An RNA of 177 nucleotides, treated with DMS and 2A3 and read out base by base. 2A3 adducts were read by reverse transcription with SuperScript II with manganese. Source: RMDB library OK1LIB, as collected in RNAgym. The RNA was probed in 150 mM KOAc, 10 mM MgCl2 and 150 mM bicine (pH 8.5) at 24 C. DMS adducts were read by reverse transcription with MarathonRT.

RNA sequence: GGGAACGACUCGAGUAGAGUCGAAAAGGUUUGACAGCACCAGGUCAUGAUGUGCCCUGGAGACAGAACUGCCGCUGCUGCUGCCAGAAGACAUGAGGCCAGGAUUUCUGUAACAUUUGUGCAGAAAUAACGAAUGGUCCUUCGGGACCAUUCGUUAAAAAGAAACAACAACAACAAC
Reactivity to DMS in 0.01 (KOAc 150mM, MgCl2 10mM, bicine 150mM(pH8.5), 24C), signal-to-noise 2, nucleotides 027 to 126: g010g000u000u000u000g070a210c160a100g020c070a300c000c010a020g000g000u000c000a010u010g000a130u030g000u000g000c110c000c000u000g000g020a090g000a250c100a140g000a110a080c150u010g020c000c090g000c030u000g000c010u000g010c060u000g000c000c070a060g000a110a160g000a050c100a140u000g000a080g000g000c010c000a020g010g000a090u000u000u000c010u030g070u000a040a090c030a280u020u030u010g000u020g010c000a010g000a000a000a070
Reactivity to 2A3 in 0.01 (KOAc 150mM, MgCl2 10mM, bicine 150mM(pH8.5), 24C), signal-to-noise 1, nucleotides 027 to 126: g050g030u050u080u030g100a110c110a020g010c000a030c070c000a000g000g000u010c030a100u060g210a110u100g040u020g000c000c000c030u010g000g070a040g060a130c000a010g010a000a070c030u030g040c000c000g000c060u080g000c000u000g080c030u000g000c000c000a000g000a210a000g050a010c040a080u110g110a010g000g040c000c030a050g020g020a000u060u000u000c000u010g050u050a090a000c000a240u070u300u260g000u000g000c000a000g040a040a040a000